[RMDB]
RNA sequence: GGGAACGACUCGAGUAGAGUCGAAAAGGUAGCCACUUCGGUGGCUACCAAAGAGAUAGUACCUAUUGAGUUCCUGAGUAGGUACUCAUGACAGGAUGUCAAAAACAUGAUUCUUCGGAAUCAUGAAUCGAACUAAACGGUUCGCCGUUUAGUUCGAAAAAGAAACAACAACAACAAC
Reactivity to DMS in 0.01 (KOAc 150mM, MgCl2 10mM, bicine 150mM(pH8.5), 24C), signal-to-noise 2, nucleotides 027 to 126: g010g010u000a000g040c000c000a010c000u010u010c130g030g030u000g000g010c000u000a000c000c000a000a090a110g000a190g020a080u000a040g010u000a030c000c000u000a020u010u000g030a120g010u000u010c000c000u000g000a010g010u000a010g020g020u000a010c000u000c140a060u000g000a010c010a170g010g000a080u000g000u020c030a030a070a060a120a160c000a020u000g000a010u000u000c000u000u000c280g050g000a030a020u030c010a000u000g010a050a160
Reactivity to 2A3 in 0.01 (KOAc 150mM, MgCl2 10mM, bicine 150mM(pH8.5), 24C), signal-to-noise 1, nucleotides 027 to 126: g000g000u040a000g030c000c000a000c000u050u040c160g120g000u040g000g000c010u050a000c000c000a000a000a000g010a000g000a000u060a050g000u000a000c020c010u020a000u050u050g040a070g010u050u040c000c010u010g020a010g010u030a000g020g000u000a000c000u010c010a110u060g000a040c000a000g260g080a260u170g040u070c060a050a000a020a030a020c000a000u010g010a010u010u030c000u010u040c200g050g010a000a000u020c000a000u000g000a000a050